Source: RMDB library OK2TST, as collected in RNAgym.
Chemical mapping of a 177-nucleotide RNA with 2A3 and DMS.
For DMS, 1,827 sequencing reads were counted.
2A3 adducts were read by reverse transcription with SuperScript II with manganese.
The RNA was probed in 150 mM KOAc, 10 mM MgCl2 and 150 mM bicine (pH 8.5) at 24 C.
Reactivities are given for positions 27 through 126.
[RMDB]
RNA sequence: GGGAACGACUCGAGUAGAGUCGAAAACAAAGAUAAUGCAGAUGCCUAUACGUUCCUUGAAAAUAUGAUUUAUGGCGAACCCACGGUUCCUAUAAAAUCCUCGCGUUUAUACGUUUUAGGGUACGACAGUCUGAGUUGAAUUCGUUCAACUCAGACUAAAAGAAACAACAACAACAAC
Reactivity to 2A3 in 0.01 (KOAc 150mM, MgCl2 10mM, bicine 150mM(pH8.5), 24C), signal-to-noise 2, nucleotides 027 to 126: c000a000a140a010g100a100u210a180a090u190g080c010a010g050a200u100g070c010c020u080a060u020a150c030g000u030u000c000c000u050u060g070a050a040a020a060u210a090u110g040a030u000u020u040a020u040g030g030c120g000a010a000c000c030c030a050c050g010g010u010u010c000c000u040a020u040a080a090a010a050u000c010c020u060c040g030c020g020u030u130u100a180u030a030c000g000u010u020u070u150a030g020g010g000u040a030c030g030a040c090
Reactivity to DMS in 0.01 (KOAc 150mM, MgCl2 10mM, bicine 150mM(pH8.5), 24C), signal-to-noise 3, nucleotides 027 to 126: c110a090a110a090g000a130u030a060a090u000g000c040a100g000a080u000g000c040c010u020a090u000a200c060g020u000u020c010c010u020u000g010a080a020a040a080u020a050u000g000a070u010u010u000a020u000g000g000c150g010a040a080c010c030c170a090c220g010g010u000u010c000c000u010a040u000a030a050a030a030u000c020c090u010c300g020c030g020u000u000u000a060u000a100c020g000u000u000u030u000a030g020g020g000u000a010c090g020a100c170